[RMDB]
RNA sequence: GGGAACGACUCGAGUAGAGUCGAAAAGUUGCCUGCUUGUAUUUUUGCGUGCCACUGAUUUUAAAACCCGUUUUUUUAAACAUGACAACCGUCCCGGUGCGAAUGUUACACCAACAGGCUGGAGGUAGACGCGGGCGGCCGCGCAAACUCCGCGCCGCCAGAGGAGGAAAUUCGUUUCCUCCUCUGGAAAAGAAACAACAACAACAAC
Reactivity to 2A3 in 0.01 (KOAc 150mM, MgCl2 10mM, bicine 150mM(pH8.5), 24C), signal-to-noise 2, nucleotides 027 to 156: g020u020u010g030c000c020u010g000c030u060u080g110u300a300u190u170u020u190u130g040c020g050u070g010c020c040a000c000u030g010a170u110u110u200u300a060a120a060a080c020c010c000g030u170u040u000u020u000u000u190a020a090a000c020a030u070g050a020c030a090a020c020c030g080u090c080c020c040g040g020u040g020c040g070a080a000u050g010u080u050a030c050a000c000c040a050a060c030a070g020g000c010u050g030g000a000g020g040u030a020g020a130c000g020c000g020g040g030c080g050g050c020c000g010c010g020c040a120a000a120c010u000c000c000g000c100g020c010c000g000